Structure probing data (DMS and 2A3) for a 207-nucleotide construct.
For 2A3, 1,731 sequencing reads were counted.
RNA sequence: GGGAACGACUCGAGUAGAGUCGAAAAGUUAGUAUAAUUAUUGAUUCCACGGAAGAACUACCAACAGUUACUCCAAUUACAACAACAUAUGAACCUUCUACAUAUAAUUAUACUAUCGAUGAUAGCACUGUUAUUACUACUGAAGAACUACAAGUAAAGGAGAUACUUAGUUCGCUAAGUAUCUCCUAAAAGAAACAACAACAACAAC
Reactivity to DMS in 0.01 (KOAc 150mM, MgCl2 10mM, bicine 150mM(pH8.5), 24C), signal-to-noise 2, nucleotides 027 to 156: g010u000u000a000g020u010a040u000a030a040u000u000a030u010u050g000a260u000u000c060c010a110c080g020g020a090a050g000a100a110c030u000a300c000c210a080a120c050a120g030u000u000a040c020u020c030c010a110a110u000u000a090c080a070a140c060a090a170c050a090u010a140u010g010a050a070c040c020u000u000c020u000a170c080a130u000a040u010a030a040u010u000a020u010a030c000u000a020u000c010g010a100u010g000a100u010a070g040c020a060c030u010g020u000u030a090u000u010a040c040u000a040c060u000g000a090a100g020a060a070c060u010a080c080a040a140g000u000a020a180
Reactivity to 2A3 in 0.01 (KOAc 150mM, MgCl2 10mM, bicine 150mM(pH8.5), 24C), signal-to-noise 3, nucleotides 027 to 156: g000u000u000a000g000u010a010u010a000a010u030u020a010u000u050g050a040u190u100c170c070a060c080g030g000a080a020g000a040a080c040u100a110c100c130a120a090c050a100g020u040u050a080c020u040c070c050a030a130u200u170a110c030a150a000c000a080a000c040a090u080a110u120g040a030a060c010c000u090u070c010u110a070c010a070u180a000u030a070a010u000u000a010u000a000c000u000a010u020c020g010a040u110g020a010u090a030g010c030a010c060u030g030u080u050a080u090u100a040c030u040a030c030u080g100a090a040g040a190a070c040u230a070c050a050a080g130u070a140a110